[RMDB]
RNA sequence: GGGAACGACUCGAGUAGAGUCGAAAAGCACGCGCGUGCAGGCAGAGAAGGGAAUCUGGACACUCCACUGGGGGCCUUCAUCAGCGGAGAGCAGGAGGUGCGUGGAGGAAUUGAAGGGAGAGACGGACAGGGACUCUAGAUUCGUCUAGAGUCCCUGAAAAGAAACAACAACAACAAC
Reactivity to DMS in 0.01 (KOAc 150mM, MgCl2 10mM, bicine 150mM(pH8.5), 24C), signal-to-noise 1, nucleotides 027 to 126: g000c040a070c090g030c160g000c150g030u000g000c050a030g010g000c050a060g000a050g000a080a040g010g020g000a110a070u000c040u050g000g020a090c130a100c080u000c010c050a020c040u000g040g040g010g000g010c040c020u000u000c020a060u000c090a070g030c060g000g020a100g010a110g040c020a100g020g010a040g000g010u000g020c190g030u000g000g030a060g010g000a040a070u000u010g010a050a070g010g000g000a040g000a070g010a100c120g000g000a220
Chemical mapping of a 177-nucleotide RNA with DMS. The data come from the RNA Mapping Database (RMDB), library OK2TRN. Conditions: 150 mM KOAc, 10 mM MgCl2 and 150 mM bicine (pH 8.5), 24 C.